[RMDB]
RNA sequence: GGGAACGACUCGAGUAGAGUCGAAAAAGGUCAACUCAGGUGGGACAGAGAUCCACCGUAGAGUGUAAGGGCAAAAGUUGGCCUGACUGUAUUUCGAUCAGCAAGAAAUUCAGAGGCGAAAGCCGGGGAUAAGUUUUUGUUUCGACAAAAACUUAUCAAAAGAAACAACAACAACAAC
Reactivity to DMS in 0.01 (KOAc 150mM, MgCl2 10mM, bicine 150mM(pH8.5), 24C), signal-to-noise 9, nucleotides 027 to 126: a030g010g020u010c020a040a020c000u010c080a210g000g010u000g000g000g010a110c150a210g020a180g010a130u030c000c000a010c000c010g010u020a070g010a160g020u000g010u020a090a120g010g000g010c060a060a090a090a070g010u000u010g000g010c010c010u000g010a120c020u000g010u000a030u000u000u000c010g010a130u030c150a110g000c190a110a100g000a020a010a030u010u010c010a030g000a140g000g010c010g000a090a060a120g000c000c000g010g020g030
Reactivity to 2A3 in 0.01 (KOAc 150mM, MgCl2 10mM, bicine 150mM(pH8.5), 24C), signal-to-noise 9, nucleotides 027 to 126: a000g040g020u030c010a010a010c000u010c040a020g010g000u030g020g030g050a060c050a090g170a040g010a230u030c000c000a010c000c000g020u040a030g010a060g020u080g020u060a060a130g080g060g010c040a050a050a030a050g020u020u030g030g000c000c000u000g030a030c000u010g010u020a030u000u020u010c040g030a110u090c030a030g110c040a100a090g010a010a030a000u050u040c010a010g030a050g070g000c010g030a050a020a010g000c000c000g010g010g030